RNA sequence: GGGAACGACUCGAGUAGAGUCGAAAAGAUAUGGAAUCCCAAGGGAGAAGCCAUUCGGAAACGAAUGGGCUUCGAGGAUCUUGGCGAUUCCUAAGUCAAAACCAGACUAGACUUCGGUCUAGUCUGGCAAAAGCAUUAAGUUCGCUUAAUGCUUUUGAAAAGAAACAACAACAACAAC
Reactivity to 2A3 in 0.01 (KOAc 150mM, MgCl2 10mM, bicine 150mM(pH8.5), 24C), signal-to-noise 3, nucleotides 027 to 126: g000a000u020a010u060g000g000a000a000u000c000c000c020a010a000g040g000g000a070g010a010a000g020c000c000a000u000u000c000g010g020a000a010a000c000g000a000a010u020g030g060g020c010u000u010c000g000a010g010g010a010u000c000u000u000g020g020c120g020a000u010u000c000c000u000a010a000g010u010c020a030a030a080a130c000c000a010g010a000c000u000a000g000a000c000u080u130c300g040g000u000c000u000a000g000u010c000u000g000g000
Reactivity to DMS in 0.01 (KOAc 150mM, MgCl2 10mM, bicine 150mM(pH8.5), 24C), signal-to-noise 7, nucleotides 027 to 126: g000a020u000a050u010g000g000a020a010u000c000c000c000a010a010g000g000g000a020g010a020a010g000c010c000a020u000u000c000g010g010a020a020a030c000g010a010a010u000g010g020g010c000u000u000c000g010a100g020g000a030u010c000u000u000g010g000c270g000a020u000u000c000c000u000a000a080g000u000c010a130a090a130a300c000c000a010g000a020c000u000a010g000a020c000u000u010c260g030g000u000c000u000a000g000u000c000u000g000g000